Record summary
Structure probing data (2A3) for a 207-nucleotide construct. The data come from the RNA Mapping Database (RMDB), library RNAMAK. The reactions ran in a buffer of 150 mM KOAc, 10 mM MgCl2 and 150 mM bicine (pH 8.5), at 24 C. Reactivities are given for positions 27 through 156.

[RMDB]
RNA sequence: GGGAACGACUCGAGUAGAGUCGAAAAGGGGUCUCUACGAAGCGACGAACUACACCGACGAAGGACUGAAGCCUCCACGGUCCAGAGGUGCGUCGAUAAGUAGAGACGGAGGCACCCAAAACCGUUCGCUGAUCCCUUCGGGGAUCAGCGAACGGAAGCUAUAGUCAAGAUUCGUCUUGACUAUAGCAAAAGAAACAACAACAACAAC
Reactivity to 2A3 in 0.01 (KOAc 150mM, MgCl2 10mM, bicine 150mM(pH8.5), 24C), signal-to-noise 1, nucleotides 027 to 156: g040g020g010g010u020c010u000c000u010a010c000g030a210a050g010c010g000a010c000g020a100a080c070u280a050c290a010c050c030g240a300c020g010a180a040g020g000a000c010u010g040a100a010g040c020c010u030c020c020a040c040g010g000u010c010c000a000g020a010g010g010u040g030c020g000u010c000g010a030u010a040a010g010u000a000g000a000g010a000c000g000g000a010g020g010c020a070c000c000c000a000a150a000a020c000c000g020u040u030c010g010c000u050g000a050u030c030c090c060u120u130c300g020g000g000g010a000u000c000a000g000c000g000a000a000c020g000g000a010a000